Conditions: 150 mM KOAc, 10 mM MgCl2 and 150 mM bicine (pH 8.5), 24 C. The record gives the reactivity of an RNA of 177 nucleotides to 2A3 and DMS. It was measured as part of the RMDB library OK2TST. In probing experiments dimethyl sulfate is read out at A N1 and C N3, which are open when not base-paired. The 2A3 profile rests on 762 reads.

RNA sequence: GGGAACGACUCGAGUAGAGUCGAAAACUGAUGAAGAUUUAAUUGAGUUGAUUUAUAAAUUGGGCGUUCUACCAGAAGAAUUAAUCUUUGGUGAUGAACAUUUAGGCACAACUGUUUAAUUGGUAUAACGUUAUAAAGCUUUCGAGCUUUAUAACGUAAAAGAAACAACAACAACAAC
Reactivity to 2A3 in 0.01 (KOAc 150mM, MgCl2 10mM, bicine 150mM(pH8.5), 24C), signal-to-noise 2, nucleotides 027 to 126: c020u080g000a090u190g050a110a170g020a100u100u170u110a130a010u120u140g040a000g020u000u000g080a130u140u180u110a210u080a090a110a030u140u020g040g040g000c020g030u020u000c010u060a000c000c000a000g190a130a010g020a010a100u150u240a140a140u080c000u000u030u030g000g000u050g090a180u080g000a010a000c010a000u000u000u130a070g080g000c020a000c010a070a000c010u000g050u060u060u070a050a000u030u020g070g030u130a120u150a100
Reactivity to DMS in 0.01 (KOAc 150mM, MgCl2 10mM, bicine 150mM(pH8.5), 24C), signal-to-noise 3, nucleotides 027 to 126: c030u000g000a110u000g010a130a180g010a080u010u000u010a040a070u000u000g010a050g020u000u000g000a090u010u000u010a090u000a050a030a060u020u010g010g010g020c040g000u000u000c050u020a020c000c010a040g010a020a050g010a030a210u020u010a130a130u000c010u000u000u000g010g010u010g000a050u000g000a030a020c010a030u000u000u010a030g000g020c210a080c050a010a030c040u000g000u010u000u010a030a050u010u000g010g010u010a070u020a090